This 207-nucleotide RNA was probed chemically with 2A3. Values cover nucleotides 27 to 156. The reactions ran in a buffer of 150 mM KOAc, 10 mM MgCl2 and 150 mM bicine (pH 8.5), at 24 C.

RNA sequence: GGGAACGACUCGAGUAGAGUCGAAAAGUUUAUGCAAAGGCAUUUCGCAAUGUGUGCUCAAACAUUGCUUAUUCAAACACGCUUCACAAUGUGCGACAAAGAAACAUUGUUAUAAGAGCUAAUGUUUACCACGCCUAAAGGUUCGCCUUUAGGCGAACGCUUCGAAAGACUUCGGUCUUUCGAAGCGAAAAGAAACAACAACAACAAC
Reactivity to 2A3 in 0.01 (KOAc 150mM, MgCl2 10mM, bicine 150mM(pH8.5), 24C), signal-to-noise 1, nucleotides 027 to 156: g070u170u140u100a050u090g000c080a150a060a110g160g000c050a050u000u060u290c040g000c000a000a000u010g020u010g000u010g010c080u110c040a020a020a000c000a000u000u050g000c000u040u070a220u060u120c050a000a120a030c110a010c110g000c010u010u050c020a030c030a010a000u010g000u010g010c010g040a060c090a120a200a000g100a000a040a000c000a010u000u000g020u060u060a130u010a110a090g000a000g030c020u000a110a030u090g000u010u020u000a100c040c000a060c010g030c010c000u030a000a030a000g040g000u000u110c220g030c010c000u020u000u050a000g000g000c010g000a010a000